RNA sequence: GGGAACGACUCGAGUAGAGUCGAAAAUGAUUAGAAAGAACCGUUGACUCAAGACGAGACAAGAAAGAAGCACAAUAACAUGAAUACGGCUUCGUUUAUGUCCCUGGCAACUCUGAGGUCUCGUACAACCUGACGAUCCUUUCGAGGAUCGUCAGGUAAAAGAAACAACAACAACAAC
Reactivity to DMS in 0.01 (KOAc 150mM, MgCl2 10mM, bicine 150mM(pH8.5), 24C), signal-to-noise 1, nucleotides 027 to 126: u040g010a070u010u020a010g010a090a020a130g040a080a090c050c080g030u000u000g000a080c160u000c030a010a000g010a060c000g030a000g000a040c130a050a240g010a100a160a030g010a010a030g000c070a020c050a070a010u020a070a140c090a010u020g000a030a020u000a140c070g070g000c150u050u000c020g000u050u020u010a060u000g000u000c000c000c000u000g000g000c060a130a000c130u040c080u000g020a170g000g000u020c000u000c000g010u010a000c050a080
Reactivity to 2A3 in 0.01 (KOAc 150mM, MgCl2 10mM, bicine 150mM(pH8.5), 24C), signal-to-noise 1, nucleotides 027 to 126: u100g020a020u040u040a040g040a070a060a000g010a180a000c100c000g010u000u130g060a060c050u000c130a100a140g170a000c000g000a000g000a060c110a130a070g100a300a130a000g120a000a000g000c050a000c000a270a290u240a300a000c000a020u170g000a260a000u200a070c060g040g040c150u000u100c000g000u160u240u020a090u220g000u000c000c000c000u000g070g020c000a000a200c000u000c000u020g000a060g070g000u040c000u000c000g090u090a020c000a000

Chemical mapping of a 177-nucleotide RNA with DMS and 2A3. The DMS profile rests on 1,203 reads. DMS adducts were read by reverse transcription with MarathonRT. For 2A3, 440 sequencing reads were counted.